[RMDB]
This 207-nucleotide RNA was probed chemically with DMS and 2A3.

RNA sequence: GGGAACGACUCGAGUAGAGUCGAAAAAGGUUCGCUGUGGUGCAACUCUUAUUAGUAACUAAUCCAAAGCAAGUAUACGAGAACAGGUUUUUAACUAUUUUUAGGCAGAUAAAAAAUAGUAUUUGACAAAAUCGAUUGUCGUUCGCGACAAUCGAAAGAUAUGACUAAGGUUCGCCUUAGUCAUAUCAAAAGAAACAACAACAACAAC
Reactivity to DMS in 0.01 (KOAc 150mM, MgCl2 10mM, bicine 150mM(pH8.5), 24C), signal-to-noise 2, nucleotides 027 to 156: a050g020g040u000u000c040g030c020u000g020u000g020g050u000g010c010a080a140c060u000c010u000u010a070u010u000a080g010u010a050a110c040u000a100a140u010c050c020a070a090a120g010c060a060a130g010u000a110u010a090c090g010a130g000a070a090c040a100g000g000u000u010u000u000u010a080a080c010u000a010u010u010u000u010u010a090g040g020c090a110g000a150u020a000a010a000a030a030a010u000a000g020u000a180u010u010u010g020a200c070a030a080a140a160u010c000g000a040u010u000g000u000c010g000u000u010c280g010c010g000a010c000a010a020u000c000g000a010a030a050
Reactivity to 2A3 in 0.01 (KOAc 150mM, MgCl2 10mM, bicine 150mM(pH8.5), 24C), signal-to-noise 4, nucleotides 027 to 156: a000g040g000u060u050c020g000c030u020g020u040g040g030u020g020c000a040a080c020u020c040u090u130a150u080u090a110g070u050a080a060c060u050a090a040u060c050c040a140a030a030g020c010a050a040g030u050a110u040a170c060g050a050g040a120a030c030a050g000g030u000u060u000u000u010a000a020c000u000a000u030u010u010u010u010a020g040g000c040a030g020a120u140a050a040a000a000a000a010u000a000g020u010a100u090u070u080g070a030c020a010a120a030a120u020c000g000a000u000u000g010u000c020g000u040u020c240g010c000g070a000c000a000a000u000c000g010a000a010a000
The DMS profile rests on 2,600 reads.
The 2A3 profile rests on 2,959 reads.
The data come from the RNA Mapping Database (RMDB), library M2RFPK.